[RMDB]
Structure probing data (2A3) for a 177-nucleotide construct.
The data come from the RNA Mapping Database (RMDB), library OK1LIB.

RNA sequence: GGGAACGACUCGAGUAGAGUCGAAAACGGAUCCACUCUACGGAGUGGAUCCGAAACACUACAUGCAGCGCUCUAGGUGUGUAGUGACAGUAAGCGCGCAACGUACGCCGCUACGGCGGCGUACGAAGCUAGGACUACGGUUCGCCGUAGUCCUAGCAAAAGAAACAACAACAACAAC
Reactivity to 2A3 in 0.01 (KOAc 150mM, MgCl2 10mM, bicine 150mM(pH8.5), 24C), signal-to-noise 1, nucleotides 027 to 126: c020g030g010a000u000c010c000a070c020u000c000u030a060c300g090g000a000g000u000g000g000a030u010c000c000g000a000a000a000c000a000c000u000a010c000a000u000g000c000a020g000c010g020c030u060c150u290a240g000g010u090g000u040g000u000a030g000u010g020a050c000a120g150u300a030a010g050c030g000c000g000c110a020a020c020g000u000a000c000g000c000c000g070c080u050a060c300g140g000c000g000g000c050g000u000a000c130g000a000a000